[RMDB]
The record gives the reactivity of an RNA of 177 nucleotides to 2A3 and DMS. Conditions: 150 mM KOAc, 10 mM MgCl2 and 150 mM bicine (pH 8.5), 24 C.
RNA sequence: GGGAACGACUCGAGUAGAGUCGAAAACCUAAGGUAGCGAAAUUCCUUGUCGGGUAAGUUCCGACCUGCACGAAUCGUGAAACGAGUUGGGCACUGUCUCAACCAGGCGCUCAGUGAAAUUGUAGUGUCACAGUGAAGCGUUCGCGCUUCACUGUGAAAAAGAAACAACAACAACAAC
Reactivity to 2A3 in 0.01 (KOAc 150mM, MgCl2 10mM, bicine 150mM(pH8.5), 24C), signal-to-noise 3, nucleotides 027 to 126: c000c000u010a060a000g060g000u000a010g020c060g030a060a030a100u070u030c010c000u010u040g040u060c040g000g000g010u110a150a110g130u200u060c010c010g000a030c000c000u100g040c110a010c100g070a030a070u150c000g000u030g110a060a030a060c120g020a110g020u040u040g000g000g000c030a020c240u030g000u020c030u010c110a000a030c010c000a000g030g000c050g010c020u000c020a030g030u010g140a050a090a140u150u050g060u030a120g050u010g040
Reactivity to DMS in 0.01 (KOAc 150mM, MgCl2 10mM, bicine 150mM(pH8.5), 24C), signal-to-noise 2, nucleotides 027 to 126: c000c000u000a060a040g030g010u020a110g010c040g000a010a110a170u000u010c000c020u020u020g000u000c020g030g000g000u000a050a130g000u020u000c010c000g010a010c010c000u000g000c060a050c060g010a010a000u000c040g040u000g010a110a110a130c110g020a170g020u020u010g000g000g020c020a150c120u010g040u010c020u020c140a000a110c090c000a070g000g020c020g000c010u000c020a060g000u000g000a060a100a040u000u000g020u000a020g030u000g030
The data come from the RNA Mapping Database (RMDB), libraries RFM100 and RFMREP.